[RMDB]
RNA sequence: GGGAACGACUCGAGUAGAGUCGAAAAAUGCAUGUAAAUACACUUUGAAGACUUCAGAUGUGGUGCAAGAGAUUAGUUAUUCUUGGGGACAGGAAUUGAUCUGUGAUGCAUAUUCUCAUGAAAUCACCGCAGGAAACCAAUUCGUUGGUUUCCUGCGAAAAGAAACAACAACAACAAC
Reactivity to 2A3 in 0.01 (KOAc 150mM, MgCl2 10mM, bicine 150mM(pH8.5), 24C), signal-to-noise 3, nucleotides 027 to 126: a000u060g000c010a010u020g010u300a020a150a000u250a040c040a000c030u080u100u050g090a160a070g210a190c060u130u010c060a050g000a130u120g050u080g060g090u050g030c030a070a100g050a000g010a140u020u060a070g120u100u130a040u020u100c030u010u080g000g010g070g010a040c060a010g030g050a010a030u000u040g000a010u000c020u020g120u080g080a010u010g070c000a000u010a020u100u000c030u000c000a070u180g060a020a090a040u170c120a010c000
Reactivity to DMS in 0.01 (KOAc 150mM, MgCl2 10mM, bicine 150mM(pH8.5), 24C), signal-to-noise 1, nucleotides 027 to 126: a060u000g020c020a060u010g040u080a030a110a180u010a000c010a050c030u000u000u000g000a010a080g010a100c230u010u040c000a000g030a090u040g000u000g000g000u010g010c080a140a060g000a010g030a030u000u000a040g000u010u020a110u030u000c000u000u000g010g010g010g010a090c000a000g010g000a020a010u060u010g000a000u000c000u000g020u000g010a020u000g000c020a030u000a030u030u000c000u020c030a190u040g000a060a090a050u060c050a030c140
The record gives the reactivity of an RNA of 177 nucleotides to 2A3 and DMS.
For 2A3 the reverse transcriptase was SuperScript II with manganese.
Source: RMDB library OK1LIB, as collected in RNAgym.